[RMDB]
RNA sequence: GGGAACGACUCGAGUAGAGUCGAAAAUCAACAUCGGAAGUCGGCACAACACCGGACUCGCGGUGAGCGAUGCAGCGUAGCUUAUGCUACGCAGCUGCUGUGCGGAUGGCUAGCAAAGGCUAGCCUAGGAUCAUUACCUCUUCGGAGGUAAUGAUCCAAAAGAAACAACAACAACAAC
Reactivity to DMS in 0.01 (KOAc 150mM, MgCl2 10mM, bicine 150mM(pH8.5), 24C), signal-to-noise 2, nucleotides 027 to 126: u040c070a120a120c210a030u050c050g030g010a170a080g000u000c020g020g000c040a030c070a020a170c030a100c000c020g000g010a140c080u030c130g020c000g000g000u030g000a200g010c060g020a030u010g040c010a010g000c000g000u000a000g000c000u030u030a090u070g010c000u010a000c010g020c000a000g000c030u000g000c030u000g020u020g060c020g000g010a070u030g000g000c000u000a000g000c000a120a210a100g050g040c020u000a010g000c000c000u040a040
Reactivity to 2A3 in 0.01 (KOAc 150mM, MgCl2 10mM, bicine 150mM(pH8.5), 24C), signal-to-noise 4, nucleotides 027 to 126: u140c050a010a100c010a120u110c030g040g050a130a000g070u040c000g050g020c040a000c000a190a090c010a050c000c020g060g100a120c040u050c090g150c020g040g020u050g010a020g010c030g210a230u190g030c040a000g000c000g020u000a000g000c020u210u160a080u300g030c000u000a010c000g000c010a000g010c000u030g000c000u040g020u070g010c020g100g000a080u080g020g000c000u000a000g000c020a140a190a060g200g000c000u000a000g020c000c000u000a030